[RMDB]
Description
An RNA of 207 nucleotides, treated with 2A3 and DMS and read out base by base. Source: RMDB library M2RFPK, as collected in RNAgym. Conditions: 150 mM KOAc, 10 mM MgCl2 and 150 mM bicine (pH 8.5), 24 C.
RNA sequence: GGGAACGACUCGAGUAGAGUCGAAAACGAGGGAAAGCUUGACCAGCUAAUCUUCUGCAACGCCAUUACGAGGACUGCCCUUAGAGGCUCAUGGCGAUAGGUCACCCCGCCGGUCGGUCAGCUGCUUAUACCCGUGCACGGUUCGCCGUGCACGGAAGUUCAAAGAUAGUUUCGACUAUCUUUGAACAAAAGAAACAACAACAACAAC
Reactivity to 2A3 in 0.01 (KOAc 150mM, MgCl2 10mM, bicine 150mM(pH8.5), 24C), signal-to-noise 3, nucleotides 027 to 156: c040g000a090g000g020g030a170a140a000g000c020u040u030g020a030c000c010a010g020c030u040a090a070u080c070u170u020c050u070g050c010a090a120c020g010c010c010a040u100u150a090c120g030a060g130g050a090c050u150g050c000c000c020u060u090a080g040a150g080g000c000u020c030a020u030g020g000c020g030a070u070a090g020g000u060c010a100c020c000c000c010g030c010c020g090g000u070c040g000g020u020c030a010g010c060u090g020c020u100u080a070u070a200c020c010c000g000u000g010c000a010c000g000g000u040u020c060g000c090c000g000u000g000c010a000c000g000g000a000a010
Reactivity to DMS in 0.01 (KOAc 150mM, MgCl2 10mM, bicine 150mM(pH8.5), 24C), signal-to-noise 1, nucleotides 027 to 156: c060g010a090g010g020g020a080a110a070g010c040u020u000g010a010c040c040a280g000c020u000a090a140u000c010u000u000c000u000g020c000a110a200c030g010c000c030a110u000u000a130c040g010a150g000g020a080c070u000g010c010c010c020u000u000a190g040a180g000g030c000u000c050a100u010g010g030c000g010a120u000a030g000g020u010c030a100c020c020c030c030g000c060c040g020g000u020c020g050g000u000c000a120g010c040u000g010c010u000u000a200u010a120c130c010c010g000u010g000c020a020c010g030g000u000u000c290g000c110c000g000u000g000c000a000c000g000g000a010a020